This 207-nucleotide RNA was probed chemically with 2A3. Source: RMDB library OK3TST, as collected in RNAgym. The RNA was probed in 150 mM KOAc, 10 mM MgCl2 and 150 mM bicine (pH 8.5) at 24 C. Reactivities are rounded to 0.1 and cut off at 0 and 3.
RNA sequence: GGGAACGACUCGAGUAGAGUCGAAAAAUUCAUAGUCAUUCUUAAAUCUCUCCUUGAGAUAGUCUGUCGGGAAGACGCCGCUUUUUGUAUGGAGUAUACGUAUCUUCUCGUUCUUUUUGAAUAUCGUCAACGGAUCAAUUUCGCCAAGCUCCGAGAGCUCAACCGCAAUAUUCGUAUUGCGGUUGAGAAAAGAAACAACAACAACAAC
Reactivity to 2A3 in 0.01 (KOAc 150mM, MgCl2 10mM, bicine 150mM(pH8.5), 24C), signal-to-noise 2, nucleotides 027 to 156: a010u200u180c070a110u110a080g090u070c050a090u240u000c030u100u190a210a270a300u090c080u010c030u030c040c000u080u120g030a030g020a040u010a040g100u060c050u010g020u010c010g000g000g010a000a030g030a010c000g020c030c040g070c110u140u190u030u020u300g110u150a100u300g080g050a010g020u120a090u030a120c000g000u000a020u000c000u020u000c020u040c010g000u090u110c070u080u110u040u030u080g070a060a030u010a010u050c130g030u040c110a100a090c070g000g020a030u060c040a050a110u050u090u080c050g040c090c040a040a010g020c030u000c070c020g110a030g000a000g040